[RMDB]
RNA sequence: GGGAACGACUCGAGUAGAGUCGAAAAAUAGGCUCUCCAACCCAACUCCUACUCAAUACGUCCUCGUCGUACAGAACUGUAACAUGUUUUCCGAACAUCCGCGCUUGGGUAUACGAGUAUACACCUUACAGCACCACUUACUUCGGUAAGUGGUGAACGGCAUUACACAGUUCGCUGUGUAAUGCCGAAAAGAAACAACAACAACAAC
Reactivity to 2A3 in 0.01 (KOAc 150mM, MgCl2 10mM, bicine 150mM(pH8.5), 24C), signal-to-noise 2, nucleotides 027 to 156: a000u080a010g000g040c000u000c000u000c000c000a120a060c000c000c000a050a030c040u030c000c030u030a030c020u010c070a140a090u110a160c060g050u010c010c050u050c000g040u000c020g000u060a060c050a080g020a060a020c010u000g030u110a020a130c020a160u080g050u030u030u050u000c050c000g030a020a000c020a110u040c000c060g060c020g020c020u030u070g060g060g000u010a030u010a040c050g000a000g020u030a010u030a050c030a070c000c010u070u120a080c040a140g020c000a020c000c000a000c020u000u000a000c000u000u020c030g090g000u010a000a000g000u000g000g000u000g000a000a000